[RMDB]
RNA sequence: GGGAACGACUCGAGUAGAGUCGAAAAUAAGUCUAGUUCGCUAGACUUACUAUCGGGAUAACAGCCUCCCGGCUCGAUCAGGCGGAUUCCGUCCAAGCGCUGCAACACACGUAUUCGUACGUGUGAAAUGCUGCCCUUGAUUCGUCAAGGGCAGCAUAAAAGAAACAACAACAACAAC
Reactivity to DMS in 0.01 (KOAc 150mM, MgCl2 10mM, bicine 150mM(pH8.5), 24C), signal-to-noise 1, nucleotides 027 to 126: u000a000a000g040u000c000u000a010g030u000u000c260g050c000u000a000g000a000c000u000u010a020c040u020a090u000c090g010g010g120a070u030a060a260c040a100g000c000c040u010c000c010c030g010g020c010u000c030g000a070u010c170a060g000g000c060g000g000a200u010u010c050c020g010u000c010c070a040a050g040c070g010c050u000g050c060a130a170c010a000c000a000c010g010u000a040u000u010c300g000u000a000c000g010u000g000u000g020a080a120
Reactivity to 2A3 in 0.01 (KOAc 150mM, MgCl2 10mM, bicine 150mM(pH8.5), 24C), signal-to-noise 1, nucleotides 027 to 126: u030a000a000g000u000c000u000a010g010u020u020c190g050c160u020a000g000a030c000u000u000a010c020u100a040u080c000g020g050g020a020u050a270a060c000a030g000c010c000u010c000c020c000g070g000c020u020c020g060a120u120c050a070g000g000c060g090g080a300u300u070c030c010g000u010c030c030a090a000g050c040g020c140u000g060c010a210a000c010a000c000a000c040g040u000a010u030u090c170g080u000a010c020g000u000g000u000g000a000a010
An RNA of 177 nucleotides, treated with DMS and 2A3 and read out base by base. For 2A3, 1,143 sequencing reads were counted. The data come from the RNA Mapping Database (RMDB), library M2PK50. 2A3 adducts were read by reverse transcription with SuperScript II with manganese. The reactions ran in a buffer of 150 mM KOAc, 10 mM MgCl2 and 150 mM bicine (pH 8.5), at 24 C.